[RMDB]
RNA sequence: GGGAACGACUCGAGUAGAGUCGAAAAAACACAGCACUCUGCAAAGACGCAAGUCGAAGUAUAGGGUGUGACACGUGACCAAUGCCGAAAGAUUAAGGCAAGGGGUUAGCCGCAAGGCGAAGCUCUAUCAUUUCUACUACUUCGGUAGUAGAAAUGAAAAAGAAACAACAACAACAAC
Reactivity to 2A3 in 0.01 (KOAc 150mM, MgCl2 10mM, bicine 150mM(pH8.5), 24C), signal-to-noise 2, nucleotides 027 to 126: a000a000c020a000c000a000g000c000a000c000u020c000u000g000c020a090a000a110g010a000c000g020c080a090a040g000u000c000g080a090a000g030u070a080u200a200g000g010g000u020g000u000g090a040c060a010c180g010u000g020a020c020c010a030a190u040g020c020c010g080a080a120a060g210a150u150u160a090a000g020g020c000a030a080g000g010g000g000u200u010a010g000c000c000g000c080a020a020g010g030c000g000a020a000g000c000u000c010u030a090
Reactivity to DMS in 0.01 (KOAc 150mM, MgCl2 10mM, bicine 150mM(pH8.5), 24C), signal-to-noise 3, nucleotides 027 to 126: a060a050c000a040c020a300g010c000a030c020u000c000u000g000c020a050a120a240g020a000c000g000c300a090a180g020u000c010g000a120a180g010u000a110u010a060g010g000g000u000g000u000g010a120c170a070c170g000u000g000a300c000c010a100a060u000g000c000c010g000a080a090a160g000a140u000u010a080a140g000g000c040a080a110g000g000g000g010u000u000a300g010c000c020g000c300a050a110g000g020c010g010a070a140g000c020u020c000u000a160